[RMDB]
RNA sequence: GGGAACGACUCGAGUAGAGUCGAAAAGAUCGGAAACAGCAGCAGGUGAGUACGCCUUAUGUGAAGGAUCGGCUGAAACACGAGGAAAUACUGAGCCAACGCAAGACGGUAGCCGAACAGUAGCAACAAAACGCUUACGUGUUCGCACGUAAGCGAACUCUUAAGUGAGGUUCGCCUCACUUAAGAGAAAAGAAACAACAACAACAAC
Reactivity to 2A3 in 0.01 (KOAc 150mM, MgCl2 10mM, bicine 150mM(pH8.5), 24C), signal-to-noise 6, nucleotides 027 to 156: g030a050u100c050g010g050a060a060a030c040a040g040c010a010g010c010a010g020g030u030g060a060g060u060a030c050g030c000c010u110u070a170u130g070u040g050a040a020g040g020a060u070c030g020g000c020u070g020a090a050a020c080a030c070g050a040g040g080a080a060a030u120a070c050u070g020a020g030c020c010a040a020c060g000c040a050a030g050a010c040g030g020u050a020g020c010c000g000a010a010c020a030g040u070a020g020c030a010a060c020a050a110a040a020c020g000c000u000u000a000c000g010u010g020u010u050c130g010c080a000c000g000u000a000a000g000c000g000a000a000
Reactivity to DMS in 0.01 (KOAc 150mM, MgCl2 10mM, bicine 150mM(pH8.5), 24C), signal-to-noise 3, nucleotides 027 to 156: g020a120u000c030g000g020a120a060a070c030a080g050c000a060g020c060a100g030g010u000g000a140g040u000a050c070g020c030c000u000u000a080u000g030u000g020a120a140g010g000a100u000c030g010g000c030u010g000a110a060a050c090a150c030g010a100g020g010a100a060a110u010a090c040u000g000a140g000c030c010a020a080c020g000c020a050a100g000a130c050g020g010u010a090g030c010c010g000a060a090c030a050g020u000a060g020c050a070a140c120a010a070a100a100c020g020c020u010u000a010c020g050u010g000u010u010c300g050c010a020c000g000u010a010a020g020c000g000a000a010
Chemical mapping of a 207-nucleotide RNA with 2A3 and DMS. For DMS the reverse transcriptase was MarathonRT. 2A3 adducts were read by reverse transcription with SuperScript II with manganese. The RNA was probed in 150 mM KOAc, 10 mM MgCl2 and 150 mM bicine (pH 8.5) at 24 C. In probing experiments dimethyl sulfate is read out at A N1 and C N3, which are open when not base-paired.